[RMDB]
RNA sequence: GGGAACGACUCGAGUAGAGUCGAAAACUGGUGAUGAAUCACACCUCGGAGUCGCACCCCUGGUUUCAGGAGUCCCGCCGCGACCCAGACGGACCGUACGGUGACUAUUACGUGUGGAGCGACACCAAUGAAUCUCUCGAUUCGUCGAGAGAUUCAUAAAAGAAACAACAACAACAAC
Reactivity to DMS in 0.01 (KOAc 150mM, MgCl2 10mM, bicine 150mM(pH8.5), 24C), signal-to-noise 1, nucleotides 027 to 126: c040u020g020g030u000g000a050u030g000a070a120u010c060a030c030a090c000c050u000c180g060g000a080g040u000c000g030c160a070c070c020c050c060u000g020g080u000u020u060c050a030g020g000a060g000u050c030c010c010g000c050c000g000c080g020a080c030c030c000a110g000a050c230g000g000a050c020c030g000u040a150c000g000g010u020g010a040c030u010a080u000u000a110c190g030u000g000u000g010g000a060g000c020g010a110c020a070c000c120a120
Reactivity to 2A3 in 0.01 (KOAc 150mM, MgCl2 10mM, bicine 150mM(pH8.5), 24C), signal-to-noise 5, nucleotides 027 to 126: c020u020g000g030u030g010a110u080g060a140a080u080c020a030c000a010c040c000u100c070g050g020a050g020u020c000g000c010a100c010c000c000c040u020g110g030u060u150u250c080a070g030g090a040g070u010c030c030c000g060c020c070g040c020g040a080c000c020c000a040g080a120c120g010g030a040c050c030g010u070a040c030g030g020u150g040a000c020u060a060u210u220a070c100g050u040g020u060g050g030a020g000c000g010a000c000a010c020c000a000

Description: Conditions: 150 mM KOAc, 10 mM MgCl2 and 150 mM bicine (pH 8.5), 24 C. This 177-nucleotide RNA was probed chemically with DMS and 2A3. For DMS, 2,222 sequencing reads were counted.